[RMDB]
RNA sequence: GGGAACGACUCGAGUAGAGUCGAAAAGAUAUGGACUGAUGUGCCAGAUACGGUCGGAAACGACCGAAUAUCGGUAAUACAUCUGUCCUAAGUCAAAGGCAACUUAAUGUUCGCAUUAAGUUGCCAACCUGUGCCUAAAGUUCGCUUUAGGCACAGGAAAAGAAACAACAACAACAAC
Reactivity to DMS in 0.01 (KOAc 150mM, MgCl2 10mM, bicine 150mM(pH8.5), 24C), signal-to-noise 1, nucleotides 027 to 126: g000a020u010a280u000g010g010a010c010u010g000a010u000g030u000g000c040c100a160g030a010u000a070c010g000g000u000c000g020g010a070a020a140c010g010a010c000c000g050a060a040u000a010u010c010g010g020u000a080a130u000a170c010a000u000c000u020g000u000c000c000u000a050a070g020u010c030a060a150a240g010g000c010a020a000c020u000u000a010a010u000g010u010u010c300g030c000a000u000u000a000a020g000u000u000g000c000c000a000a010
Reactivity to 2A3 in 0.01 (KOAc 150mM, MgCl2 10mM, bicine 150mM(pH8.5), 24C), signal-to-noise 1, nucleotides 027 to 126: g010a010u060a020u070g000g000a000c000u030g000a000u010g010u030g050c130c080a020g000a000u000a010c020g010g010u010c000g010g030a000a070a060c000g010a010c000c020g000a030a020u060a000u020c000g010g120u090a090a020u070a060c000a000u000c000u050g000u080c000c000u020a040a010g020u060c040a140a140a090g040g030c000a000a010c010u020u000a000a000u020g050u070u090c300g040c190a000u000u000a000a010g000u000u000g020c020c000a000a010
This 177-nucleotide RNA was probed chemically with DMS and 2A3. Reactivities are rounded to 0.1 and cut off at 0 and 3. The DMS profile rests on 1,095 reads. It was measured as part of the RMDB library TTRDEL.